[RMDB]
RNA sequence: GGGAACGACUCGAGUAGAGUCGAAAAGAAAACAAGUACCGAGAACAUUGUUUUCGCUGCUUGGCGUUGCCGUUUUGUGUUGCAGUUGGUUGGGUAACGCCGCAAAUACCAACGGUAUAGAGAGAUAGACUAUUUACUACUUCGGUAGUAAAUAGUCAAAAGAAACAACAACAACAAC
Reactivity to 2A3 in 0.01 (KOAc 150mM, MgCl2 10mM, bicine 150mM(pH8.5), 24C), signal-to-noise 7, nucleotides 027 to 126: g020a010a020a000a000c010a000a010g020u030a040c040c060g020a030g040a100a030c100a300u130u220g020u000u010u000u000c010g000c030u020g000c010u040u100g010g000c000g010u000u010g010c010c000g040u030u020u150u160g190u030g050u080u110g040c050a070g000u080u090g100g020u060u110g080g010g000u010a000a010c010g000c020c000g000c010a030a050a000u140a020c010c000a070a040c050g000g020u080a040u100a070g180a000g010a000g020a030u080a140
Reactivity to DMS in 0.01 (KOAc 150mM, MgCl2 10mM, bicine 150mM(pH8.5), 24C), signal-to-noise 4, nucleotides 027 to 126: g010a060a040a120a130c030a010a010g020u000a040c200c010g000a050g000a010a020c020a170u020u030g000u000u000u000u010c000g020c170u000g000c010u010u010g010g020c020g010u000u010g000c010c020g020u020u010u000u010g010u010g000u000u000g010c070a070g010u000u000g000g020u000u010g000g000g020u010a040a060c190g000c010c020g010c100a020a030a070u040a080c030c010a030a050c020g000g040u030a070u020a070g000a120g010a080g010a120u020a100

Annotation
An RNA of 177 nucleotides, treated with 2A3 and DMS and read out base by base. For 2A3, 6,171 sequencing reads were counted. Values cover nucleotides 27 to 126. The RNA was probed in 150 mM KOAc, 10 mM MgCl2 and 150 mM bicine (pH 8.5) at 24 C.